[RMDB]
RNA sequence: GGGAACGACUCGAGUAGAGUCGAAAAGAUAUGGAGCGGACGACAUGCCUAUCUCGGAAACGAGUAAGGGCAACAGCGUCUCGCUCCUAAGUCAAAACUCUGUCUGCAGUUCGCUGCAGACAGAGAAUCAGAUUCUAAACUUCGGUUUAGAAUCUGAAAAAGAAACAACAACAACAAC
Reactivity to 2A3 in 0.01 (KOAc 150mM, MgCl2 10mM, bicine 150mM(pH8.5), 24C), signal-to-noise 3, nucleotides 027 to 126: g020a010u020a010u060g010g010a000g010c010g000g020a000c010g020a070c070a190u250g000c000c010u070a090u150c000u020c010g030g020a040a020a010c000g000a000g030u060a130a300g040g020g000c030a060a050c080a040g000c010g000u020c010u020c050g020c000u040c000c000u000a010a000g010u010c010a020a010a080a190c000u010c010u010g010u000c000u000g000c000a020g010u050u130c170g120c140u010g000c000a000g010a000c000a020g000a000g000a010a030
Reactivity to DMS in 0.01 (KOAc 150mM, MgCl2 10mM, bicine 150mM(pH8.5), 24C), signal-to-noise 3, nucleotides 027 to 126: g000a010u000a280u000g000g000a000g020c000g000g000a010c010g040a070c070a130u000g000c000c000u000a300u000c000u000c000g010g000a070a020a120c010g020a020g000u020a110a300g010g000g000c010a040a080c240a120g000c000g000u000c000u010c020g020c010u000c000c000u000a000a030g020u000c010a100a060a140a120c000u000c010u000g000u000c000u000g000c010a010g040u000u010c210g000c000u000g000c010a000g000a000c000a000g000a000g000a030a070
An RNA of 177 nucleotides, treated with 2A3 and DMS and read out base by base.
The reactions ran in a buffer of 150 mM KOAc, 10 mM MgCl2 and 150 mM bicine (pH 8.5), at 24 C.
The data come from the RNA Mapping Database (RMDB), library TTRDEL.
DMS (dimethyl sulfate) methylates the pairing face of unpaired adenines and cytosines.